[RMDB]
RNA sequence: GGGAACGACUCGAGUAGAGUCGAAAAUAGCAGCACUAACAGACUGAAAUAAGCCAUAUUACUAGAGUUUAGGAAUUUAAUGGCUCAGGAGAAAGUAGAAGCACCAAGUGUAGUGAAUAAAAUAGCAGCUAACAAGCUUUGUGCACCUUCACAUGCACUGGUGAUUAAUCUUCGGAUUAAUCACCAGAAAAGAAACAACAACAACAAC
Reactivity to DMS in 0.01 (KOAc 150mM, MgCl2 10mM, bicine 150mM(pH8.5), 24C), signal-to-noise 2, nucleotides 027 to 156: u000a070g010c030a100g010c050a120c040u010a100a130c060a090g010a130c000u000g000a180a100a120u010a060a040g020c030c050a030u000a100u010u000a070c010u000a040g020a220g030u000u010u000a060g020g020a050a070u010u020u000a040a070u010g020g000c010u000c010a080g010g000a100g000a040a060a110g020u010a050g000a080a110g030c020a080c060c030a070a080g030u000g070u000a000g010u010g030a020a080u010a020a050a080a100u000a110g040c020a060g030c050u020a070a070c140a100a130g010c020u000u010u000g030u000g030c050a010c040c070u010u000c060a100c030a050u000g020c070a190
Reactivity to 2A3 in 0.01 (KOAc 150mM, MgCl2 10mM, bicine 150mM(pH8.5), 24C), signal-to-noise 4, nucleotides 027 to 156: u120a010g000c040a000g000c010a000c100u090a130a030c060a090g100a060c010u060g050a040a070a110u150a100a010g000c010c010a040u040a040u150u080a030c050u060a050g050a080g240u160u160u110a040g000g020a050a040u060u090u070a180a050u070g010g000c000u010c030a060g010g080a050g030a060a010a020g040u100a010g020a140a000g020c030a010c020c030a020a020g010u030g000u060a050g000u050g070a070a080u110a120a130a030a020u090a030g040c050a000g000c000u030a110a020c030a140a050g020c000u040u050u050g010u030g000c010a060c010c020u040u040c030a040c010a060u070g040c020a010
Chemical mapping of a 207-nucleotide RNA with DMS and 2A3. 2A3 adducts were read by reverse transcription with SuperScript II with manganese. Reactivities are rounded to 0.1 and cut off at 0 and 3. For DMS, 2,327 sequencing reads were counted. The reactions ran in a buffer of 150 mM KOAc, 10 mM MgCl2 and 150 mM bicine (pH 8.5), at 24 C.